[RMDB]
RNA sequence: GGGAACGACUCGAGUAGAGUCGAAAACACAAUUCUCUAAGCGAUGAGAAGCCUGUGGAAAAUUAGGGAAGGGCUACGGCUAUAAUCCUAAGAAAGCUUAUCUACAAGCGGAGGUAUUCUCAGAACGAAAACCAUUUGGCGUUCGCGCCAAAUGGAACACGAUAAAUGCCUUCGGGCAUUUAUCGUGAAAAGAAACAACAACAACAAC
Reactivity to 2A3 in 0.01 (KOAc 150mM, MgCl2 10mM, bicine 150mM(pH8.5), 24C), signal-to-noise 2, nucleotides 027 to 156: c110a000c010a050a110u060u020c000u020c020u130a140a040g080c030g060a040u000g010a010g000a000a020g000c000c010u160g000u220g120g090a160a300a050a090u040u000a020g000g000g060a000a120g090g020g000c020u040a020c170g060g000c000u010a020u060a180a030u070c010c030u000a040a000g050a090a060a000g050c000u050u030a090u130c080u190a100c070a060a010g000c010g030g060a010g000g010u090a300u090u000c000u000c000a030g030a100a030c060g020a090a060a050a080c000c000a000u000u010u000g000g020c010g010u010u030c190g000c020g000c050c000a010a010a000u000g000g000a000a000
This 207-nucleotide RNA was probed chemically with 2A3.
As a SHAPE reagent, 2A3 marks flexible, mostly unpaired nucleotides at the ribose 2'-OH.
The data come from the RNA Mapping Database (RMDB), library M2RFPK.
For 2A3, 814 sequencing reads were counted.
The reactions ran in a buffer of 150 mM KOAc, 10 mM MgCl2 and 150 mM bicine (pH 8.5), at 24 C.